The record gives the reactivity of an RNA of 170 nucleotides to DMS and 2A3. It was measured as part of the RMDB library 15KLIB. 2A3 adducts were read by reverse transcription with SuperScript II with manganese. The reactions ran in a buffer of 150 mM KOAc, 10 mM MgCl2 and 150 mM bicine (pH 8.5), at 24 C.
[RMDB]
RNA sequence: GGGAACGACUCGAGUAGAGUCGAAAAGAUUGCGAGCGGCGGUCCUGAGAACUCUUAUCUUCCUGCUUAGAAGAGGAGUCUCCUGGACGCCCCGCCCGGUCGGGAUGGGCCGCAGUUCCCGACGAGGAAACGGAAGGCUUCGGCCUUCCGAAAAGAAACAACAACAACAAC
Reactivity to DMS in 0.01 (KOAc 150mM, MgCl2 10mM, bicine 150mM(pH8.5), 24C), signal-to-noise 3, nucleotides 027 to 129: g040a110u020u040g010c060g040a070g020c000g040g010c130g040g010u050c000c010u060g010a050g020a080a070c020u000c010u000u000a140u030c010u000u000c010c280u050g040c160u050u080a120g010a020a000g070a040g040g000a010g000u000c020u010c040c110u040g040g000a070c030g000c020c050c000c020g050c020c000c110g030g030u020c020g040g000g050a060u020g000g030g070c040c030g090c050a130g010u010u010c070c000c010g010a040c120g040a120g000g000a000a000a000
Reactivity to 2A3 in 0.01 (KOAc 150mM, MgCl2 10mM, bicine 150mM(pH8.5), 24C), signal-to-noise 4, nucleotides 027 to 129: g060a010u170u250g020c070g010a070g060c100g050g000c020g040g130u030c000c000u050g020a030g000a080a060c000u000c020u060u090a120u080c000u020u020c020c040u120g230c090u150u160a060g000a000a000g030a000g030g000a010g000u000c030u030c040c030u010g000g000a000c000g020c000c000c000c000g000c000c000c040g040g040u030c000g040g000g010a000u070g060g020g000c000c000g030c000a000g020u020u000c000c000c000g010a050c030g010a020g100g020a130a030a010